This 177-nucleotide RNA was probed chemically with DMS and 2A3. For 2A3 the reverse transcriptase was SuperScript II with manganese. The DMS profile rests on 3,051 reads. DMS adducts were read by reverse transcription with MarathonRT.

RNA sequence: GGGAACGACUCGAGUAGAGUCGAAAAGUGUGGGGUAGCCGUAGCGAAAGCGAGUCCGAAUAGGGCGUUUGUAGUGGCAUGUUCUAGACCCGAAGCGGAGUGAUCUACCCAUGGCCAGGGUGAAGCGUAGCUCCUAGGCUUUCGAGCCUAGGAGCUAAAAAGAAACAACAACAACAAC
Reactivity to DMS in 0.01 (KOAc 150mM, MgCl2 10mM, bicine 150mM(pH8.5), 24C), signal-to-noise 2, nucleotides 027 to 126: g000u030g050u020g000g000g000g010u000a120g030c060c030g000u020a100g010c030g010a130a100a070g020c000g060a050g000u000c000c000g010a080a030u010a230g010g000g010c020g020u020u010u010g020u000a040g010u020g010g030c110a100u010g020u000u000c070u030a120g030a090c040c010c010g000a070a110g010c040g000g020a030g010u020g000a100u050c070u010a090c050c030c000a120u060g000g010c030c040a030g000g000g050u000g010a070a090g000c150g000
Reactivity to 2A3 in 0.01 (KOAc 150mM, MgCl2 10mM, bicine 150mM(pH8.5), 24C), signal-to-noise 1, nucleotides 027 to 126: g150u060g000u050g070g000g000g000u010a000g000c000c000g050u020a030g000c000g000a100a020a000g020c000g000a060g010u000c000c000g060a100a240u240a260g000g010g000c030g010u010u160u290g070u050a080g020u030g000g000c000a020u080g040u030u040c030u080a030g040a120c000c000c000g020a030a000g000c010g000g000a040g030u180g020a020u020c000u030a040c010c000c000a010u010g000g000c000c060a050g010g000g010u120g040a040a000g000c020g000